Description: This 177-nucleotide RNA was probed chemically with 2A3. The 2A3 profile rests on 352 reads. It was measured as part of the RMDB library OK1LIB.
RNA sequence: GGGAACGACUCGAGUAGAGUCGAAAACUCUUUUGUCUUUUGUCCUUGCAGCGACGUCCUUUAUUGGCGGCCCAAGGAGUCGUCGCCACACGCACGAAAUGAUUAUGACGAUGAUGCAGACGGUAAGCGCUCAGGUCACUUUCGAGUGACCUGAGCGAAAAGAAACAACAACAACAAC
Reactivity to 2A3 in 0.01 (KOAc 150mM, MgCl2 10mM, bicine 150mM(pH8.5), 24C), signal-to-noise 1, nucleotides 027 to 126: c000u000c000u000u050u000u120g160u050c010u060u080u000u010g060u010c000c000u000u070g100c000a030g000c000g060a000c130g120u040c000c110u300u300u090a200u080u030g070g010c040g000g000c020c000c000a020a000g260g000a040g000u130c020g000u000c000g070c050c000a000c000a000c000g160c000a040c050g020a040a030a040u040g100a040u050u050a040u100g000a000c020g010a010u230g000a000u100g000c000a000g010a100c000g040g090u050a050a000g000